The record gives the reactivity of an RNA of 177 nucleotides to 2A3 and DMS. Source: RMDB library OK2TST, as collected in RNAgym. DMS adducts were read by reverse transcription with MarathonRT.
[RMDB]
RNA sequence: GGGAACGACUCGAGUAGAGUCGAAAAAGCACCAUUCAAGCUUAUCUUUCUGAGCUAAAUCGUGACUUGGCGAGCUUUGAACGUGCACUGCUCGAAUGGUAUCAACAAGAUGCAAUGGGCGUGUGGACCUGAUCACGCAUUUCGAUGCGUGAUCAGGAAAAGAAACAACAACAACAAC
Reactivity to 2A3 in 0.01 (KOAc 150mM, MgCl2 10mM, bicine 150mM(pH8.5), 24C), signal-to-noise 2, nucleotides 027 to 126: a000g000c040a010c000c050a050u030u050c030a040a010g000c000u040u080a070u160c060u040u180u080c100u160g000a000g020c060u090a010a080a160u100c050g060u040g160a140c070u060u040g100g000c030g020a010g000c010u050u090u160g010a040a030c040g040u080g020c040a010c070u120g000c000u000c010g100a060a040u120g040g000u040a010u040c010a010a220c040a060a040g030a020u020g000c000a010a120u100g000g060g000c040g030u010g030u050g070g000a030
Reactivity to DMS in 0.01 (KOAc 150mM, MgCl2 10mM, bicine 150mM(pH8.5), 24C), signal-to-noise 1, nucleotides 027 to 126: a070g010c150a120c050c000a210u000u000c020a060a060g030c020u000u000a020u000c040u030u000u010c130u000g020a060g020c020u000a070a010a120u010c150g030u000g020a100c260u000u030g010g000c130g000a040g010c030u000u000u000g020a000a000c170g000u000g010c120a080c110u000g050c030u000c050g000a030a080u000g000g000u000a040u000c060a030a070c260a040a130g000a050u010g010c040a040a050u010g000g000g020c000g000u030g000u000g010g000a210
Background: Values cover nucleotides 27 to 126. For DMS, 775 sequencing reads were counted. The RNA was probed in 150 mM KOAc, 10 mM MgCl2 and 150 mM bicine (pH 8.5) at 24 C. The 2A3 profile rests on 1,278 reads. DMS (dimethyl sulfate) methylates the pairing face of unpaired adenines and cytosines. 2A3 adducts were read by reverse transcription with SuperScript II with manganese.